[RMDB]
RNA sequence: GGGAACGACUCGAGUAGAGUCGAAAAGGAGGGAAGGCUGGAGUUUCACCAGCGAAGGCUGCUCAGCCGAUUUCGCAUUUCAACGCUUUCACGGCGAGCAGCGAAAGCGAAAGCGAAGCCUCCGAAAGGGAUAUAGCUCGUUCGCGAGCUAUAUCCCAAAAGAAACAACAACAACAAC
Reactivity to DMS in 0.01 (KOAc 150mM, MgCl2 10mM, bicine 150mM(pH8.5), 24C), signal-to-noise 1, nucleotides 027 to 126: g040g030a010g000g000g000a230a110g000g010c030u000g010g000a130g030u030u000u000c110a300c000c000a000g000c000g070a030a100g000g000c000u000g030c000u000c040a140g080c000c000g000a010u030u000u000c190g120c000a110u000u030u030c200a130a090c280g000c040u000u010u000c120a120c030g010g000c000g000a030g030c000a030g030c010g000a000a050a150g000c000g030a090a100a150g000c000g000a070a220g000c000c050u060c000c000g000a050a110a050
Reactivity to 2A3 in 0.01 (KOAc 150mM, MgCl2 10mM, bicine 150mM(pH8.5), 24C), signal-to-noise 2, nucleotides 027 to 126: g000g000a020g000g060g000a000a160g220g000c020u060g000g020a110g040u070u010u040c040a040c030c010a000g000c010g000a020a000g180g030c010u030g050c000u000c040a060g000c010c000g010a000u040u070u000c080g010c010a070u060u230u170c190a160a100c130g070c000u060u050u060c060a090c040g000g000c020g000a010g020c030a020g020c020g010a000a000a000g020c000g000a090a020a000g100c090g020a010a020g120c050c000u000c000c000g000a020a000a000

Chemical mapping of a 177-nucleotide RNA with DMS and 2A3. Values cover nucleotides 27 to 126. For DMS, 1,317 sequencing reads were counted. The reactions ran in a buffer of 150 mM KOAc, 10 mM MgCl2 and 150 mM bicine (pH 8.5), at 24 C.